Structure probing data (2A3) for a 207-nucleotide construct. Conditions: 150 mM KOAc, 10 mM MgCl2 and 150 mM bicine (pH 8.5), 24 C. Values cover nucleotides 27 to 156.
RNA sequence: GGGAACGACUCGAGUAGAGUCGAAAAGGUGUAUCCUCAGCACCCCGCCUGUCUCAUGAGGUGCGUACGGAGACUUCAGGAUCGGAUCGUUUGGGUUCCAGUCAUUAGCGAGCGGCAUAGCCGACCCAUGCCCCUUCCUUCUCGAGCUUGAUGGCUGGGUUAUACCCGUGUUCGCACGGGUAUAACCAAAAGAAACAACAACAACAAC
Reactivity to 2A3 in 0.01 (KOAc 150mM, MgCl2 10mM, bicine 150mM(pH8.5), 24C), signal-to-noise 1, nucleotides 027 to 156: g030g010u020g030u080a070u070c040c040u040c020a040g010c050a020c020c000c010c010g040c020c020u100g040u110c020u000c130a110u090g030a050g060g000u000g020c090g040u020a090c050g040g060a000g000a060c050u130u090c070a090g040g040a060u100c020g000g050a050u020c040g030u070u150u040g060g000g040u120u000c010c000a000g030u100c020a040u030u110a090g050c070g000a000g040c000g010g020c010a070u050a030g070c030c030g100a100c000c000c040a030u110g000c000c010c000c010u080u110c010c000u090u000c110u000c020g030a030g050c030u070u130g040a020u050g060g010c000u010g000